[RMDB]
RNA sequence: GGGAACGACUCGAGUAGAGUCGAAAAGACCCCCUCUUCGGAGGGGGUCAAACAUUCCCAAAUUCCACCUUGGUGAUGGCACCCGGAGAGGAGCCAUGAUAAAAACCGAGGCGUUCGCGCCUCGGAACCAUUGAGUAGUGUUCGCACUACUCAAUGGAAAAGAAACAACAACAACAAC
Reactivity to 2A3 in 0.01 (KOAc 150mM, MgCl2 10mM, bicine 150mM(pH8.5), 24C), signal-to-noise 2, nucleotides 027 to 126: g010a000c030c000c000c020c000u020c000u050u060c200g060g000a010g000g010g000g000g010u000c010a000a010a000c000a010u030u040c000c000c000a000a040a050u090u010c010c000a080c030c040u080u140g060g060u070g020a020u030g010g000c010a030c050c020c080g280g130a150g050a240g240g000a000g020c010c010a030u040g070a020u060a080a100a000a080a080c000c000g000a010g020g000c000g040u030u030c180g030c010g020c010c010u000c010g000g000a000a010
Reactivity to DMS in 0.01 (KOAc 150mM, MgCl2 10mM, bicine 150mM(pH8.5), 24C), signal-to-noise 1, nucleotides 027 to 126: g000a020c000c020c000c000c000u000c000u000u000c170g020g030a010g010g000g020g040g010u000c000a000a020a040c180a260u020u000c020c020c000a080a080a120u000u000c060c030a060c090c100u010u010g010g010u020g000a050u000g010g010c000a070c000c000c020g030g010a170g000a110g020g000a030g020c030c000a000u000g000a100u000a030a040a060a100a090c000c000g000a020g010g000c010g000u010u000c250g030c040g020c000c010u000c000g030g000a020a050